[RMDB]
RNA sequence: GGGAACGACUCGAGUAGAGUCGAAAAAUGUUGAUGUCGGUGGUGAUGUAGCUAGUCUGUUAACCAAAGAGUCUAGAGAUGUCCACAUAUGUUGCCCUGUUGUUGAUGUCAAGGAUGCGCACCGGCAUCAGCUUAUCACAUUCGUGUGAUAAGCUGAAAAAGAAACAACAACAACAAC
Reactivity to 2A3 in 0.01 (KOAc 150mM, MgCl2 10mM, bicine 150mM(pH8.5), 24C), signal-to-noise 2, nucleotides 027 to 126: a010u100g040u010u030g010a000u000g030u050c040g000g080u000g000g120u140g020a090u090g090u030a000g000c040u000a000g130u060c030u020g070u000u040a050a030c020c000a000a110a070g040a020g010u000c000u000a060g000a000g000a050u000g030u000c030c000a050c030a030u080a100u190g110u050u210g180c090c050c000u060g150u110u000g010u010u030g010a120u020g030u050c020a060a020g120g000a020u040g000c030g000c000a040c000c050g000g000c000a000
Reactivity to DMS in 0.01 (KOAc 150mM, MgCl2 10mM, bicine 150mM(pH8.5), 24C), signal-to-noise 4, nucleotides 027 to 126: a090u010g020u000u000g020a020u000g000u000c000g000g020u000g010g000u020g020a070u010g020u000a040g010c010u010a060g020u020c020u030g000u000u010a080a140c210c180a070a080a100g000a050g030u010c010u010a030g000a090g000a050u000g010u000c010c030a050c070a050u010a070u020g020u000u010g010c030c020c030u000g020u020u000g010u000u000g010a070u010g000u000c070a080a060g000g000a040u010g000c050g020c010a020c020c000g010g000c020a020
Source: RMDB library OK1LIB, as collected in RNAgym.
Structure probing data (2A3 and DMS) for a 177-nucleotide construct.
The reactions ran in a buffer of 150 mM KOAc, 10 mM MgCl2 and 150 mM bicine (pH 8.5), at 24 C.
2A3 adducts were read by reverse transcription with SuperScript II with manganese.